[RMDB]
RNA sequence: GGGAACGACUCGAGUAGAGUCGAAAAGGAUGGGCUUUAAACUCGAUGCAACAGUUCCUGGAUAUCCUAAGCUUUUCAUUACUCGUGAAGAGGCUGUAAGGCAAGUUCGAAGCUGGAUAGGCUUCGAUAGCUAGUAUGUUCGCAUACUAGAAAAGAAACAACAACAACAAC
Reactivity to DMS in 0.01 (KOAc 150mM, MgCl2 10mM, bicine 150mM(pH8.5), 24C), signal-to-noise 9, nucleotides 027 to 129: g050g020a110u050g010g010g010c030u010u010u020a060a080a060c010u010c020g030a010u020g010c130a110a120c110a160g000u010u010c000c030u000g010g010a100u020a020u020c010c000u040a060a050g010c010u020u020u010u000c000a010u000u040a130c180u020c170g000u000g020a050a050g000a030g010g030c050u020g010u010a050a040g020g010c190a130a100g020u010u000c000g000a030a010g010c000u020g000g020a160u060a110g010g010c010u020u000c000g010a020u020a010g010
Reactivity to 2A3 in 0.01 (KOAc 150mM, MgCl2 10mM, bicine 150mM(pH8.5), 24C), signal-to-noise 9, nucleotides 027 to 129: g260g040a110u280g020g000g010c000u040u040u070a140a130a020c000u000c000g020a020u140g040c120a190a050c020a140g000u010u000c000c000u000g020g050a120u100a070u200c020c030u040a050a030g000c000u010u010u010u000c010a030u020u160a150c070u060c120g030u040g070a070a020g020a030g130g010c010u030g050u110a040a020g010g010c070a070a040g040u030u020c010g000a000a000g000c010u020g020g060a170u140a170g000g000c000u000u000c000g000a000u010a010g000
Overview:
Structure probing data (DMS and 2A3) for a 170-nucleotide construct. The DMS profile rests on 124,855 reads. Source: RMDB library 15KLIB, as collected in RNAgym.